RNA sequence: GGGAACGACUCGAGUAGAGUCGAAAAGCAGACGGCACUUAUUCUUGUAGUAGGCAGGCGCAUCGCAACAUGAGGGCAUAACCCUCGUGCGAAUUGCGGUGCGCCGAACACAGGUCCCUCAGGGGGCAGAUCCACGAUCUUUCGAGAUCGUGGAUCUAAAAGAAACAACAACAACAAC
Reactivity to DMS in 0.01 (KOAc 150mM, MgCl2 10mM, bicine 150mM(pH8.5), 24C), signal-to-noise 2, nucleotides 027 to 126: g030c040a120g000a100c000g000g000c040a160c000u020u000a060u000u000c030u000u010g040u000a030g060u000a060g000g080c190a080g000g000c000g000c000a000u000c000g000c010a050a140c000a000u000g030a020g030g000g000c220a240u130a200a300c000c000c000u000c000g000u000g010c300g000a100a100u020u010g000c000g000g050u000g000c000g000c020c000g000a030a030c180a120c190a080g030g000u000c010c000c040u030c120a070g000g000g000g000g000c030
Reactivity to 2A3 in 0.01 (KOAc 150mM, MgCl2 10mM, bicine 150mM(pH8.5), 24C), signal-to-noise 2, nucleotides 027 to 126: g080c040a000g020a040c030g040g000c030a010c050u100u110a110u150u120c050u050u080g000u030a120g000u040a040g050g040c160a010g010g000c000g030c000a000u000c000g020c010a000a030c000a010u000g000a000g020g000g010c070a050u100a160a140c010c000c010u000c000g000u000g000c060g150a160a110u080u050g000c000g020g000u000g000c010g000c000c000g010a010a000c000a000c020a020g000g080u040c020c030c020u030c080a110g030g000g000g000g070c020
The record gives the reactivity of an RNA of 177 nucleotides to DMS and 2A3. The DMS profile rests on 1,733 reads. For 2A3 the reverse transcriptase was SuperScript II with manganese. The data come from the RNA Mapping Database (RMDB), library RFM100. For DMS the reverse transcriptase was MarathonRT.